[RMDB]
RNA sequence: GGGAACGACUCGAGUAGAGUCGAAAAAGGUGCCAUCACUAUUAUCAUGACAGUGAUUGGCGCGAUCCUGACGUCGCUGGUAAUCGCCCGCGAAUGGGAACGCGGCACAAUGGAGGCGUUACUGUCGCCAGGUCAGUUGUUUCGACAACUGACCUGGAAAAGAAACAACAACAACAAC
Reactivity to DMS in 0.01 (KOAc 150mM, MgCl2 10mM, bicine 150mM(pH8.5), 24C), signal-to-noise 1, nucleotides 027 to 126: a090g020g000u000g010c000c000a080u010c000a020c000u000a060u000u000a050u000c300a040u010g020a040c050a040g020u000g010a100u000u000g030g020c000g020c000g000a050u000c010c030u000g030a060c090g000u000c020g010c020u000g000g020u000a090a080u010c100g000c200c000c030g010c020g010a050a100u020g050g020g010a100a100c050g020c000g010g000c060a110c140a090a030u000g020g060a160g010g010c020g010u000u000a050c080u000g010u000c120g000
Reactivity to 2A3 in 0.01 (KOAc 150mM, MgCl2 10mM, bicine 150mM(pH8.5), 24C), signal-to-noise 1, nucleotides 027 to 126: a000g190g000u000g020c010c000a020u040c000a030c030u020a060u120u120a230u280c180a120u220g090a040c020a010g000u000g000a060u040u100g040g000c010g000c000g030a050u040c000c020u020g020a010c030g030u000c010g000c070u050g010g070u150a180a140u110c120g040c070c040c030g020c070g070a030a150u210g090g100g060a120a050c010g040c010g010g070c040a010c040a050a080u160g000g100a050g020g000c000g050u050u060a030c020u110g070u150c020g000
The record gives the reactivity of an RNA of 177 nucleotides to DMS and 2A3. Reactivities are given for positions 27 through 126. It was measured as part of the RMDB library OK2TRN. The RNA was probed in 150 mM KOAc, 10 mM MgCl2 and 150 mM bicine (pH 8.5) at 24 C. For DMS the reverse transcriptase was MarathonRT. For DMS, 872 sequencing reads were counted. Reactivities are rounded to 0.1 and cut off at 0 and 3.